[RMDB]
The record gives the reactivity of an RNA of 177 nucleotides to DMS and 2A3. The RNA was probed in 150 mM KOAc, 10 mM MgCl2 and 150 mM bicine (pH 8.5) at 24 C. For DMS the reverse transcriptase was MarathonRT. The 2A3 profile rests on 1,404 reads. The data come from the RNA Mapping Database (RMDB), library TTRDEL.
RNA sequence: GGGAACGACUCGAGUAGAGUCGAAAAGAUAUGGAGCGUACCUUUUGACGUGUCUAACCUCGGAAACGAGUCGACACGAUAAGGUAUACGCUCCUAAGUCAAACUUGGAGGCUUCGGCCUCCAAGAAGUUAACAUUCCCCUUCGGGGGAAUGUUAACAAAAGAAACAACAACAACAAC
Reactivity to DMS in 0.01 (KOAc 150mM, MgCl2 10mM, bicine 150mM(pH8.5), 24C), signal-to-noise 2, nucleotides 027 to 126: g000a020u020a280u010g000g000a020g020c010g010u000a020c030c000u000u000u070u000g040a140c120g020u000g010u010c000u000a160a140c250c020u020c010g010g000a120a060a110c010g000a020g000u000c190g000a010c000a010c000g000a070u010a010a000g010g000u000a090u000a020c000g000c050u000c000c000u000a000a040g030u030c000a150a090a240c020u010u010g000g020a030g010g000c000u000u010c300g030g020c000c000u010c000c000a000a000g000a100a060
Reactivity to 2A3 in 0.01 (KOAc 150mM, MgCl2 10mM, bicine 150mM(pH8.5), 24C), signal-to-noise 1, nucleotides 027 to 126: g010a000u100a030u080g000g010a000g000c010g010u000a020c000c030u000u050u120u220g300a170c050g000u010g030u020c020u040a120a160c020c000u000c010g050g070a090a100a050c010g000a000g020u070c040g030a000c010a010c000g000a000u080a030a000g000g000u060a180u010a160c000g000c020u000c000c000u010a010a000g010u000c030a070a100a070c000u000u000g000g000a020g020g070c010u060u100c300g160g030c060c000u020c030c000a010a020g000a000a000